[RMDB]
RNA sequence: GGGAACGACUCGAGUAGAGUCGAAAAAAAGAUAUGGAAGCACUCCCCACCUUGUCACAUUGCGAAGAACUGCGAUCGGAAACGAUCGCAGGGAGCAAUAGGACAAGAGGUGCUUCCUAAGUCAAAACCAUUGACAUUUGUUCGCAAAUGUCAAUGGAAAAGAAACAACAACAACAAC
Reactivity to DMS in 0.01 (KOAc 150mM, MgCl2 10mM, bicine 150mM(pH8.5), 24C), signal-to-noise 2, nucleotides 027 to 126: a100a130a110g000a070u010a200u000g020g010a010a010g010c000a030c010u010c150c000c020c040a300c140c000u000u010g020u000c010a030c040a050u000u000g000c000g030a100a150g000a170a190c010u000g010c010g000a000u010c010g010g000a090a070a130c000g000a010u000c000g000c000a010g050g000g000a000g010c010a000a020u010a130g000g000a020c010a000a000g000a040g010g000u000g010c010u000u000c000c000u020a030a080g000u000c070a070a120a160a130
Reactivity to 2A3 in 0.01 (KOAc 150mM, MgCl2 10mM, bicine 150mM(pH8.5), 24C), signal-to-noise 1, nucleotides 027 to 126: a000a000a000g110a070u190a070u190g010g020a010a010g000c000a000c000u160c030c010c040c000a010c000c010u000u010g000u000c010a020c000a250u010u020g000c050g300a300a010g000a140a040c000u000g000c000g000a000u020c010g000g000a090a020a060c030g000a020u000c080g050c010a000g000g000g000a000g000c000a000a020u020a120g000g000a000c000a000a000g000a010g000g020u000g010c010u000u000c000c000u000a040a030g050u040c050a010a000a110a280
Description
Structure probing data (DMS and 2A3) for a 177-nucleotide construct. For DMS the reverse transcriptase was MarathonRT. Conditions: 150 mM KOAc, 10 mM MgCl2 and 150 mM bicine (pH 8.5), 24 C. It was measured as part of the RMDB library TTRDES. As a SHAPE reagent, 2A3 marks flexible, mostly unpaired nucleotides at the ribose 2'-OH.